[RMDB]
RNA sequence: GGGAACGACUCGAGUAGAGUCGAAAAGGCUCUCGCCGGACACCGGGUCAACGGUCUCGGCCGCCAAGUCGCUCCUGCGUCUCAGCGACGACGAGGAUGAAGGCAGCGGGGGCAGCUCCGGCGCAGACAUUUUACGGGGGUUCGCCCCCGUAAAAUGAAAAGAAACAACAACAACAAC
Reactivity to DMS in 0.01 (KOAc 150mM, MgCl2 10mM, bicine 150mM(pH8.5), 24C), signal-to-noise 1, nucleotides 027 to 126: g000g010c040u010c010u000c060g020c020c010g000g000a060c160a010c050c040g000g030g030u020c160a090a160c060g000g010u010c050u000c030g010g020c020c020g040c020c020a060a270g000u000c010g020c010u000c010c020u000g010c010g000u010c020u000c230a180g020c100g000a020c080g020a080c130g000a090g000g010a070u010g010a070a120g010g000c020a070g020c000g000g000g000g000g010c060a060g010c050u000c010c030g010g010c030g020c160a040g000a140